The record gives the reactivity of an RNA of 177 nucleotides to 2A3 and DMS. It was measured as part of the RMDB library RFMREP. High 2A3 reactivity points to a flexible backbone, as in loops and unpaired stretches. For 2A3, 1,189 sequencing reads were counted. For DMS the reverse transcriptase was MarathonRT. The RNA was probed in 150 mM KOAc, 10 mM MgCl2 and 150 mM bicine (pH 8.5) at 24 C.
RNA sequence: GGGAACGACUCGAGUAGAGUCGAAAAUCACCUUGAUAUGACAGCGUCACACGCUAGGCAAUACGACCGCUCCAUAUCUGCCGAAUGAUGCCAAUGUAUGGUGCCUACUGUCCAACGUAACCGUUAAGGAAAUAAAGCUGUUCGCAGCUUUAUUUCCAAAAGAAACAACAACAACAAC
Reactivity to 2A3 in 0.01 (KOAc 150mM, MgCl2 10mM, bicine 150mM(pH8.5), 24C), signal-to-noise 1, nucleotides 027 to 126: u040c020a160c050c010u000u100g140a040u080a070u200g050a020c030a060g010c000g010u060c020a060c010a010c090g040c010u000a010g040g060c010a070a040u040a110c050g040a030c020c070g010c000u030c040c000a010u030a020u060c010u000g070c000c020g040a060a020u140g060a050u080g050c000c010a060a010u080g050u100a050u060g110g010u060g020c000c040u000a030c060u040g030u000c020c040a070a010c060g090u050a000a070c060c000g060u110u050a140a050
Reactivity to DMS in 0.01 (KOAc 150mM, MgCl2 10mM, bicine 150mM(pH8.5), 24C), signal-to-noise 2, nucleotides 027 to 126: u010c060a110c040c010u000u000g000a080u020a090u000g010a060c050a040g000c140g000u020c060a080c090a190c120g000c060u000a080g000g000c030a080a070u020a060c060g010a160c110c070g020c020u000c060c040a000u000a030u000c040u000g010c070c000g010a100a040u010g010a030u000g020c010c030a030a120u020g030u000a110u020g000g000u000g040c010c000u000a050c040u000g010u000c010c030a070a080c130g000u000a080a180c070c040g000u000u000a090a140